The record gives the reactivity of an RNA of 177 nucleotides to DMS.
[RMDB]
RNA sequence: GGGAACGACUCGAGUAGAGUCGAAAAGAUAUGGAAUCCUAUGGGAGCUCAGACAUCGGAAACGAUGUCAGGAGCGAAGAACAUACAUGGAUUCCUAAGUCAAAGGAUCCUCCUUCGGGAGGAUCCAGAAUAGACUUUGCUUCGGCAAAGUCUAUUCAAAAGAAACAACAACAACAAC
Reactivity to DMS in 0.01 (KOAc 150mM, MgCl2 10mM, bicine 150mM(pH8.5), 24C), signal-to-noise 2, nucleotides 027 to 126: g000a000u000a010u020g020g010a000a000u000c000c000u010a010u000g010g010g000a050g020c000u000c000a100g000a010c000a010u010c000g010g000a010a000a010c000g040a000u000g010u000c010a020g030g020a030g000c000g030a070a090g000a200a220c020a010u000a010c300a190u000g010g000a000u010u000c000c000u020a000a080g000u000c000a090a150a110g010g000a000u000c000c000u000c000c010u000u000c270g010g020g000a010g000g000a010u000c000c000a030

The RNA was probed in 150 mM KOAc, 10 mM MgCl2 and 150 mM bicine (pH 8.5) at 24 C. Reactivities are rounded to 0.1 and cut off at 0 and 3.